RNA sequence: GGGAACGACUCGAGUAGAGUCGAAAAAAAUCUGCCUGUUCGAAAAGAAAAUAUUCACAAAUGAGCAGUGUAUUAGAAGACAACUGAAUUGCUUCUAAGAAUGGGUCUCACUCUGCCAUCACCCAGGCUGGAGUGUGGUGGCACCAUCAUGGCUCAAGGAUUAAUCAGUGUUCGCACUGAUUAAUCCAAAAGAAACAACAACAACAAC
Reactivity to 2A3 in 0.01 (KOAc 150mM, MgCl2 10mM, bicine 150mM(pH8.5), 24C), signal-to-noise 3, nucleotides 027 to 156: a000a000a000u070c030u080g040c010c010u040g060u050u080c050g050a130a100a050a040g120a010a140a100a060u210a120u140u180c070a040c040a110a090a080u090g010a010g010c020a010g000u020g000u090a060u060u020a010g010a010a010g010a040c040a070a000c090u160g070a140a080u110u030g010c000u010u030c010u010a000a030g060a050a070u050g020g050g000u000c020u020c040a020c020u050c020u010g000c030c000a030u030c040a020c010c020c010a040g070g070c050u080g000g070a030g020u060g000u000g010g040u020g010g020c020a040c080c000a030u050c020a010u070g070g000c000u010c060a030a070
Reactivity to DMS in 0.01 (KOAc 150mM, MgCl2 10mM, bicine 150mM(pH8.5), 24C), signal-to-noise 1, nucleotides 027 to 156: a090a060a040u000c010u000g010c000c000u000g000u000u010c020g010a110a030a110a130g060a120a100a050a150u010a080u000u000c050a300c130a120a080a080u000g050a090g010c000a040g010u000g010u000a120u000u000a030g000a020a000g010a050c080a020a100c170u000g000a040a300u000u000g000c000u000u000c020u000a020a060g010a160a020u000g020g040g010u000c020u000c020a070c050u010c040u020g030c000c010a130u000c010a070c030c000c010a110g000g000c040u010g000g000a080g010u010g000u000g000g030u010g030g000c060a010c010c040a060u020c040a060u000g010g010c010u010c000a040a300
The record gives the reactivity of an RNA of 207 nucleotides to 2A3 and DMS. 2A3 is a SHAPE reagent: it acylates the 2'-hydroxyl of flexible nucleotides of all four kinds. The data come from the RNA Mapping Database (RMDB), library OK3TST.